[RMDB]
RNA sequence: GGGAACGACUCGAGUAGAGUCGAAAAAGUCAGUCGACUGAGAGACUAGUCCUCUAGCUCUGACUAGAGCUUCCUGACUCUAGCUGAAGGAGAGAAGCUCUAGAGAGCUAGCUGAAGAGAGGAUCUCAGCUUCCUCUCUGAGAUCGAUCAGGAGAGAUCCACUGUCUGGAUUCGUCCAGACAGUGGAAAAAGAAACAACAACAACAAC
Reactivity to DMS in 0.01 (KOAc 150mM, MgCl2 10mM, bicine 150mM(pH8.5), 24C), signal-to-noise 2, nucleotides 027 to 156: a080g040u000c040a150g000u010c010g000a040c000u010g020a100g000a280g000a080c030u000a120g010u010c040c000u030c010u010a040g000c010u010c000u040g010a160c010u010a040g000a010g020c000u000u000c040c050u030g020a300c010u010c020u000a140g030c130u020g010a110a170g040g030a190g010a200g030a110a070g000c010u010c000u000a000g000a070g000a070g060c010u000a000g030c120u000g040a090a070g000a020g020a030g000g020a060u000c020u010c240a100g020c000u010u010c010c000u000c000u010c000u010g020a090g010a080u010c060g000a140u010c020a100g000g010a130g040a220g010a230
Reactivity to 2A3 in 0.01 (KOAc 150mM, MgCl2 10mM, bicine 150mM(pH8.5), 24C), signal-to-noise 2, nucleotides 027 to 156: a030g140u080c080a020g020u040c010g030a120c050u070g000a020g010a000g020a010c030u020a030g090u050c010c020u000c000u000a000g010c000u000c020u050g220a130c010u010a010g010a000g010c010u030u000c020c010u120g200a300c010u030c020u060a100g120c070u100g120a090a050g030g000a060g010a010g010a010a000g000c010u000c000u000a010g000a000g000a000g040c030u000a000g000c030u030g090a110a030g080a000g010a010g040g000a030u030c060u030c150a050g030c040u050u050c010c000u000c010u000c010u020g040a050g010a180u050c040g000a040u100c010a020g000g060a050g040a000g060a070